[RMDB]
RNA sequence: GGGAACGACUCGAGUAGAGUCGAAAAGAUAUGGAUUUGGUGUUGAGCGUCUGUCGGAAACGACAGUACGCAAUGAUGCACUGAAUCCUAAGUCAAACUAACUCUAUUCUUCGGAAUAGAGUUAGAAGAUUAAGAGCAUCUUCGGAUGCUCUUAAUCAAAAGAAACAACAACAACAAC
Reactivity to DMS in 0.01 (KOAc 150mM, MgCl2 10mM, bicine 150mM(pH8.5), 24C), signal-to-noise 3, nucleotides 027 to 126: g000a020u000a040u020g000g000a020u000u000u000g000g030u000g030u000u010g020a140g010c000g000u000c000u020g010u010c000g010g000a040a020a040c000g010a010c010a010g000u000a000c000g030c010a060a070u000g000a150u000g000c000a000c010u010g020a000a000u000c010c000u000a010a060g000u000c010a140a160a300c010u000a040a020c000u000c000u000a000u000u000c000u000u010c250g040g010a000a010u000a000g000a000g020u000u000a000g000a060a110
Reactivity to 2A3 in 0.01 (KOAc 150mM, MgCl2 10mM, bicine 150mM(pH8.5), 24C), signal-to-noise 2, nucleotides 027 to 126: g010a000u040a000u060g020g000a000u010u000u020g030g040u050g040u180u300g300a050g000c020g020u030c000u010g000u010c000g010g000a020a020a010c000g000a000c020a000g000u020a000c020g000c010a000a040u180g020a020u020g000c000a000c000u010g010a000a000u010c010c000u000a030a000g010u010c040a080a090a120c020u010a000a000c010u000c010u010a010u020u020c020u030u080c300g100g010a000a000u000a000g000a000g000u000u000a000g000a000a030